[RMDB]
RNA sequence: GGGAACGACUCGAGUAGAGUCGAAAAGACACUCAGUUCGCUGAGUGUCAAAUAAAAUCUGCGGUUAAAAACGAGGCGUUAUAACCGCUGAACGCCUCGUUAAAAGAACCAAGUUCGCUUGGUUCAAGCUGUAUUAUUGGUUCGCCAAUAAUACAGCAAAAGAAACAACAACAACAAC
Reactivity to 2A3 in 0.01 (KOAc 150mM, MgCl2 10mM, bicine 150mM(pH8.5), 24C), signal-to-noise 6, nucleotides 027 to 126: g000a010c000a000c000u000c000a010g020u060u050c120g020c140u000g000a000g000u000g000u000c000a000a000a000u010a000a010a000a070u050c050u100g100c050g120g060u120u190a160a140a010a000a000c010g000a000g000g000c000g010u010u040a090u050a150a050c030c030g010c040u020g030a000a000c000g000c000c000u000c000g000u000u010a000a000a000a020g010a000a000c000c000a000a000g000u030u070c200g000c100u000u010g000g000u010u010c010a000a010
Reactivity to DMS in 0.01 (KOAc 150mM, MgCl2 10mM, bicine 150mM(pH8.5), 24C), signal-to-noise 5, nucleotides 027 to 126: g000a010c000a000c000u000c000a000g010u000u010c220g030c000u010g010a010g010u000g010u000c000a010a050a060u000a060a060a090a070u000c070u010g010c070g020g010u010u010a080a060a070a020a010c000g010a020g000g010c010g010u000u000a050u010a070a110c080c050g000c060u000g000a020a010c010g000c000c000u000c010g020u000u000a010a070a080a090g000a000a000c000c000a010a000g000u000u000c220g010c000u000u000g010g010u000u000c000a050a090

Chemical mapping of a 177-nucleotide RNA with 2A3 and DMS. For DMS, 8,180 sequencing reads were counted. The 2A3 profile rests on 15,751 reads. Source: RMDB library M2PK50, as collected in RNAgym. Values cover nucleotides 27 to 126. For 2A3 the reverse transcriptase was SuperScript II with manganese. Conditions: 150 mM KOAc, 10 mM MgCl2 and 150 mM bicine (pH 8.5), 24 C.